[RMDB]
RNA sequence: GGGAACGACUCGAGUAGAGUCGAAAAGCAACUUAGGAUUUUAGGCUCCCCGUGCGUGUCUCGAACCAUGCCGGGCCAAACCCACGGGGGCUGGCGGUCCCCGUGCGGUCAAAAUCAAACCGAUGGAAAAACAGUUCUAGCUUCGGCUAGAACUGAACGUUGUAGCUGUCUUCGGACAGCUACAACGAAAAGAAACAACAACAACAAC
Reactivity to 2A3 in 0.01 (KOAc 150mM, MgCl2 10mM, bicine 150mM(pH8.5), 24C), signal-to-noise 5, nucleotides 027 to 156: g030c010a020a100c060u120u110a110g060g070a120u060u040u030u120a060g020g000c010u110c010c000c010c020g060u150g030c020g010u040g020u040c080u060c260g090a060a050c020c000a010u020g000c000c000g010g010g000c000c020a050a030a010c010c000c000a000c000g000g000g010g010g000c010u020g080g010c050g030g010u000c000c000c000c000g000u000g020c100g000g000u010c010a020a030a020a070u050c010a060a060a080c040c030g090a070u100g070g050a100a070a000a000a020c000a000g000u000u000c000u000a010g000c000u040u040c190g070g010c010u000a010g000a000a000c000u000g000a000a000
Reactivity to DMS in 0.01 (KOAc 150mM, MgCl2 10mM, bicine 150mM(pH8.5), 24C), signal-to-noise 1, nucleotides 027 to 156: g000c020a030a050c020u010u000a070g020g020a090u000u000u000u000a150g030g030c050u000c000c010c030c000g060u030g000c020g050u000g020u000c060u000c080g040a180a150c110c020a080u000g020c100c040g010g020g080c020c030a080a050a150c040c010c000a040c050g000g000g010g110g040c020u000g000g020c180g010g050u000c020c020c000c020g040u000g010c000g010g000u010c020a050a070a050a080u000c080a070a070a060c000c030g010a130u000g010g010a100a090a080a090a110c010a040g070u000u010c000u000a010g010c020u000u000c300g020g000c010u000a000g000a000a000c010u000g000a010a050